RNA sequence: GGGAACGACUCGAGUAGAGUCGAAAAAAGAGAAGUCACAGUUGAUGAAAUGGUGAAUGAAAUAUUACCAUACAAACCAUACUUUGAUGCAUCGGGUGGCGGUGUAACAGUCAGUGGUGGCGAACCAGUCUAGACUUCUUUUCGAAGAAGUCUAGACAAAAGAAACAACAACAACAAC
Reactivity to DMS in 0.01 (KOAc 150mM, MgCl2 10mM, bicine 150mM(pH8.5), 24C), signal-to-noise 4, nucleotides 027 to 126: a050a050g010a080g020a130a070g020u000c020a010c070a040g000u010u010g020a050u010g000a080a070a020u000g020g000u010g000a010a040u010g000a190a090a070u040a110u000u000a020c020c030a050u000a080c130a100a090a040c110c030a020u010a040c030u000u020u020g020a030u000g000c100a120u010c040g010g000g020u010g000g010c110g020g000u030g000u000a060a040c130a090g000u010c020a080g010u040g000g030u000g000g000c010g010a050a080c090c100a150
Reactivity to 2A3 in 0.01 (KOAc 150mM, MgCl2 10mM, bicine 150mM(pH8.5), 24C), signal-to-noise 8, nucleotides 027 to 126: a000a000g140a010g030a090a010g010u030c020a010c030a040g030u050u030g050a100u040g050a050a110a110u030g020g030u070g070a050a090u090g100a070a140a040u290a040u070u050a030c020c010a010u030a090c100a030a100a010c060c010a030u080a110c040u080u080u110g030a060u100g020c040a040u030c020g050g040g070u070g100g050c040g000g000u030g020u020a070a060c030a020g050u060c010a010g010u040g050g020u010g040g000c010g010a020a020c020c010a020
This 177-nucleotide RNA was probed chemically with DMS and 2A3. 2A3 adducts were read by reverse transcription with SuperScript II with manganese. Source: RMDB library OK1LIB, as collected in RNAgym. The reactions ran in a buffer of 150 mM KOAc, 10 mM MgCl2 and 150 mM bicine (pH 8.5), at 24 C.